[RMDB]
RNA sequence: GGGAACGACUCGAGUAGAGUCGAAAACAGGUGGCCGCCGCUACACGCUAUGGCGUGAAUCACCUGCCGUUAGCCACAAUGGCGAUGGCCACGCUCGCCCAGGAUCUGAGAUCGUACUUGGGCGCGCGCCCCUCGAUAGCUUCGGCUAUCGAGGGGCAAAAGAAACAACAACAACAAC
Reactivity to 2A3 in 0.01 (KOAc 150mM, MgCl2 10mM, bicine 150mM(pH8.5), 24C), signal-to-noise 1, nucleotides 027 to 126: c010a000g020g060u010g000g000c000c000g020c020c000g040c030u100a030c070a010c100g030c020u000a030u080g020g000c030g050u080g040a060a090u190c070a070c060c030u020g000c000c010g060u000u090a020g000c000c010a050c030a160a120u140g000g000c020g010a040u020g000g010c000c000a010c020g000c000u010c010g000c020c000c000a010g050g000a060u070c070u160g090a030g040a270u200c070g040u060a160c000u010u020g000g020g010c000g000c000g030c040
Reactivity to DMS in 0.01 (KOAc 150mM, MgCl2 10mM, bicine 150mM(pH8.5), 24C), signal-to-noise 1, nucleotides 027 to 126: c040a060g030g030u000g000g010c050c000g010c040c000g060c020u000a010c120a230c240g010c020u000a070u010g020g000c010g010u000g090a230a140u000c100a150c180c040u000g000c010c000g000u000u000a100g020c010c160a110c210a120a150u000g010g000c000g000a010u000g000g000c000c040a140c020g000c000u000c000g000c000c000c000a000g000g000a130u000c080u020g000a160g020a070u000c100g010u000a200c030u020u000g000g000g030c000g050c110g000c030
Structure probing data (2A3 and DMS) for a 177-nucleotide construct. The reactions ran in a buffer of 150 mM KOAc, 10 mM MgCl2 and 150 mM bicine (pH 8.5), at 24 C. Values cover nucleotides 27 to 126. For 2A3 the reverse transcriptase was SuperScript II with manganese.